[RMDB]
RNA sequence: GGGAACGACUCGAGUAGAGUCGAAAAUUAUUAUAUUUUCUGUCACUUCUGAAGUGACGGAAAAGAGGAGUUUGAAUUAGAUUUGCAAAACGGGCGGUAUCAAGAAUACUGUCACUCUAUAUGUCUAGAUAUUAAGGCAGUUCGCUGCCUUAAUAUCAAAAGAAACAACAACAACAAC
Reactivity to DMS in 0.01 (KOAc 150mM, MgCl2 10mM, bicine 150mM(pH8.5), 24C), signal-to-noise 1, nucleotides 027 to 126: u040u000a070u010u000a300u030a230u010u010u010u000c000u000g020u010c010a000c010u000u000c240u010g010a110a010g050u000g010a010c010g000g000a000a000a010a040g010a150g040g010a150g000u000u000u000g010a090a130u020u010a100g020a150u010u000u010g020c100a050a070a070a080c230g010g000g010c000g020g010u010a000u000c060a100a080g020a170a120u000a010c000u000g010u000c010a080c090u030c080u010a100u000a070u010g000u010c050u010a050